Structure probing data (2A3 and DMS) for a 207-nucleotide construct. Conditions: 150 mM KOAc, 10 mM MgCl2 and 150 mM bicine (pH 8.5), 24 C. It was measured as part of the RMDB library OK3TST. The 2A3 profile rests on 2,768 reads.
RNA sequence: GGGAACGACUCGAGUAGAGUCGAAAAUGUGCCAUUAUGCCACUUGUUGUUCGUACAACAAUUGGCACAACUUUCACUGACAACUCCCAGAGUGGAAGUGAUUGUUGUGCGGACAGCAGGUGGUACAACUUUCACUGGGAGUUGUGGAAGUGGAAAACGUGUGCACACUGUUCGCAGUGUGCAUACGAAAAGAAACAACAACAACAAC
Reactivity to 2A3 in 0.01 (KOAc 150mM, MgCl2 10mM, bicine 150mM(pH8.5), 24C), signal-to-noise 2, nucleotides 027 to 156: u170g020u070g040c000c010a060u100u070a090u160g000c000c000a000c000u000u010g010u000u000g000u010u010c000g010u000a000c000a000a000c010a010a020u030u060g100g050c050a010c000a000a000c000u000u020u000c010a000c000u040g150a020c000a060a030c040u000c020c020c010a030g020a010g070u000g000g000a000a000g010u020g010a040u030u040g000u000u000g000u000g000c000g000g000a010c010a000g000c000a000g000g000u000g010g000u010a000c000a000a000c000u000u010u010c000a000c000u010g010g000g000a000g000u000u010g000u000g000g000a020a000g000u040g010g030a010a040a020a010
Reactivity to DMS in 0.01 (KOAc 150mM, MgCl2 10mM, bicine 150mM(pH8.5), 24C), signal-to-noise 2, nucleotides 027 to 156: u000g020u010g020c020c090a140u000u010a080u000g000c020c010a010c060u000u000g010u000u000g020u020u000c110g030u000a090c020a000a020c000a020a070u000u020g030g030c130a040c050a110a060c000u000u000u000c010a010c010u000g000a180c020a010a170c080u030c010c010c030a130g030a080g030u010g020g030a010a020g000u000g050a060u000u010g000u010u010g030u010g030c050g030g010a050c030a070g020c050a050g000g010u000g000g020u000a010c010a060a050c040u000u000u000c070a080c030u000g020g010g030a120g020u000u000g050u000g010g020a060a270g010u010g010g000a100a060a060a150